[RMDB]
RNA sequence: GGGAACGACUCGAGUAGAGUCGAAAACAAAUUGUCUUGCGUAAUUCUAAUGGUGCUUGCAUUUGGAACGCUGCUGCAUAUAUGAAACUCUCGGAUGCACUUAAACGACAGAUUCGCAUUGCAUGCCUAACUCUUGGGUUCGCCCAAGAGAAAAGAAACAACAACAACAAC
Reactivity to DMS in 0.01 (KOAc 150mM, MgCl2 10mM, bicine 150mM(pH8.5), 24C), signal-to-noise 9, nucleotides 027 to 129: c110a080a100a120u040u040g040u050c090u010u000g030c210g050u000a060a090u030u000c040u000a050a110u010g030g040u050g000c100u040u050g030c010a060u000u010u030g000g050a070a060c050g040c100u000g030c130u010g000c020a070u000a040u050a110u030g030a080a080a110c100u000c090u000c000g040g010a040u000g030c050a070c150u030u020a050a070a160c050g040a100c070a050g040a120u050u020c050g020c050a000u010u040g020c030a030u010g030c040c040u040a090a180
Reactivity to 2A3 in 0.01 (KOAc 150mM, MgCl2 10mM, bicine 150mM(pH8.5), 24C), signal-to-noise 9, nucleotides 027 to 129: c030a000a080a040u090u040g020u010c030u020u060g010c010g100u120a090a110u090u020c020u040a070a060u130g090g000u090g060c050u070u100g000c010a040u040u030u090g070g020a030a040c100g020c050u080g000c030u020g020c080a010u080a000u020a040u200g140a100a100a080c080u090c000u000c060g060g010a030u050g010c010a010c020u090u230a130a130a040c080g110a040c030a070g040a090u060u040c010g000c040a010u010u030g000c000a010u060g010c000c000u040a060a050